Structure probing data (DMS and 2A3) for a 177-nucleotide construct.
For DMS, 940 sequencing reads were counted.
The reactions ran in a buffer of 150 mM KOAc, 10 mM MgCl2 and 150 mM bicine (pH 8.5), at 24 C.
The data come from the RNA Mapping Database (RMDB), library RFMREP.
For DMS the reverse transcriptase was MarathonRT.
2A3 adducts were read by reverse transcription with SuperScript II with manganese.
RNA sequence: GGGAACGACUCGAGUAGAGUCGAAAACGUUCGCAAUAAGGGAUGCCUGCCUCGGAAAGAGGCAGGUCGCAGUGACUCGGACGCUCCAACUGUCUAGUAACAACAUAGGUGACCGCAAAUCCGCAAGCACUUUGCUAAGGUUCGCCUUAGCAAAGUGAAAAGAAACAACAACAACAAC
Reactivity to DMS in 0.01 (KOAc 150mM, MgCl2 10mM, bicine 150mM(pH8.5), 24C), signal-to-noise 2, nucleotides 027 to 126: c050g020u000u010c030g020c150a130a130u000a120a080g000g000g000a130u000g020c010c000u000g010c000c000u020c000g000g020a090a140a170g030a000g020g000c000a000g000g010u020c040g010c060a060g030u030g000a030c100u010c040g020g020a060c010g000c070u000c030c040a080a060c110u000g010u000c080u000a050g000u000a140a020c100a060a030c090a070u000a030g000g010u010g010a070c060c050g000c110a060a030a050u000c030c030g020c150a110a110g020
Reactivity to 2A3 in 0.01 (KOAc 150mM, MgCl2 10mM, bicine 150mM(pH8.5), 24C), signal-to-noise 1, nucleotides 027 to 126: c000g030u020u020c030g000c070a090a080u130a170a090g050g030g080a050u060g040c000c000u000g010c010c020u020c000g100g210a300a180a140g000a010g010g000c000a000g000g000u000c000g000c020a020g030u040g070a010c020u000c050g000g020a010c020g000c000u000c010c010a020a060c060u050g030u040c020u060a060g000u050a060a080c080a030a000c000a030u070a010g030g020u030g030a040c010c010g000c060a120a040a000u040c040c040g040c020a020a020g110